[RMDB]
The data come from the RNA Mapping Database (RMDB), library TTRDES. The record gives the reactivity of an RNA of 177 nucleotides to DMS.

RNA sequence: GGGAACGACUCGAGUAGAGUCGAAAAGAUAUGGAUCAGUCCCUAGGGAGAUCAACAGGUCGGAAACGACCUCUAGAUCAUCGAUCUAGGGAGCUGAUCCUAAGUCAAACUGUACUUCGGUACAGAAGUGAUUUUGAACGUUCGCGUUCAAAAUCACAAAAGAAACAACAACAACAAC
Reactivity to DMS in 0.01 (KOAc 150mM, MgCl2 10mM, bicine 150mM(pH8.5), 24C), signal-to-noise 1, nucleotides 027 to 126: g040a020u000a300u020g000g000a070u000c000a000g000u000c000c030c000u000a020g000g000g000a020g000a000u010c000a000a100c300a090g020g050u070c000g020g030a070a120a300c000g010a000c000c000u000c000u000a290g000a010u070c010a190u000c300g000a060u000c000u000a010g000g000g000a020g020c000u030g000a020u000c000c000u000a010a010g000u000c050a090a090a140c000u000g000u000a030c000u010u000c150g030g000u000a010c010a010g000a050a110
The reactions ran in a buffer of 150 mM KOAc, 10 mM MgCl2 and 150 mM bicine (pH 8.5), at 24 C. Reactivities are given for positions 27 through 126.